[RMDB]
RNA sequence: GGGAACGACUCGAGUAGAGUCGAAAAGAUAUGGAGGGAGUGUGAUAGGACUAUACUUUCGGAAACGAAAGUACGAAUCCUAGAGCACGAAGAACUCCUAAGUCAAAGCUCGUGUUCGCACGAGCAACGACUUACACAUGUUCGCAUGUGUAAGUCGAAAAGAAACAACAACAACAAC
Reactivity to 2A3 in 0.01 (KOAc 150mM, MgCl2 10mM, bicine 150mM(pH8.5), 24C), signal-to-noise 3, nucleotides 027 to 126: g040a020u100a030u170g020g000a020g010g040g000a060g000u010g010u040g010a040u010a010g030g000a010c040u030a040u000a080c000u020u010u010c000g010g030a040a060a020c010g000a000a000a010g000u010a010c040g060a070a160u000c000c000u000a000g000a000g000c000a000c020g120a130a010g000a020a010c000u000c000c000u010a130a030g050u050c070a110a040a040g000c030u000c010g010u020g070u060u140c300g030c090a010c000g010a000g000c000a000a000
Reactivity to DMS in 0.01 (KOAc 150mM, MgCl2 10mM, bicine 150mM(pH8.5), 24C), signal-to-noise 4, nucleotides 027 to 126: g030a050u000a300u000g000g000a020g000g010g010a100g030u000g030u000g000a300u000a000g000g000a020c060u000a280u000a000c000u000u000u000c000g010g010a050a110a190c010g000a010a000a000g000u000a010c120g020a050a130u000c000c000u000a000g000a300g010c010a000c010g010a090a140g000a100a180c000u000c000c010u000a060a110g010u000c020a080a160a080g000c010u010c000g030u000g010u010u010c150g000c010a000c000g000a020g000c000a020a040